[RMDB]
RNA sequence: GGGAACGACUCGAGUAGAGUCGAAAAGACUGGCGUAGCGCGCGUACGGAUAUGGGAAUGGCAUGCCUAAACCAUAUCCCUAUACCAUAGCGCGCGAAGGUAUAGGAUAAGGCAUGCCAAGCCAGGAGGGAUGCCUGGUGUUCGCAUUAGGCAUCCCAAAAGAAACAACAACAACAAC
Reactivity to 2A3 in 0.01 (KOAc 150mM, MgCl2 10mM, bicine 150mM(pH8.5), 24C), signal-to-noise 9, nucleotides 027 to 126: g090a030c010u020g010g000c020g040u040a020g030c000g010c010g000c010g020u070a060c080g060g040a060u060a100u260g110g020g070a130a160u070g000g000c000a000u010g010c000c010u110a170a110a070c060c020a030u040a030u120c040c000c000u010a010u010a010c000c010a080u090a070g010c000g000c000g000c000g010a000a000g000g000u010a000u010a010g010g000a010u040a110a060g000g000c000a000u000g000c000c000a010a010g030c000c000a010g010g030a090
Reactivity to DMS in 0.01 (KOAc 150mM, MgCl2 10mM, bicine 150mM(pH8.5), 24C), signal-to-noise 9, nucleotides 027 to 126: g010a160c010u010g000g000c000g010u010a080g000c000g010c010g000c000g020u020a070c100g010g000a100u030a060u030g010g000g020a100a130u000g000g010c000a010u000g000c010c000u000a080a100a150c300c210a200u020a030u010c080c020c020u000a000u000a010c010c010a120u020a170g000c000g000c010g000c000g010a040a050g000g000u000a010u000a000g000g000a050u010a050a030g000g000c000a010u000g000c000c000a030a040g000c000c000a020g000g000a170

The data come from the RNA Mapping Database (RMDB), library OK1LIB.
Structure probing data (2A3 and DMS) for a 177-nucleotide construct.
The reactions ran in a buffer of 150 mM KOAc, 10 mM MgCl2 and 150 mM bicine (pH 8.5), at 24 C.
DMS adducts were read by reverse transcription with MarathonRT.
The DMS profile rests on 54,130 reads.
2A3 adducts were read by reverse transcription with SuperScript II with manganese.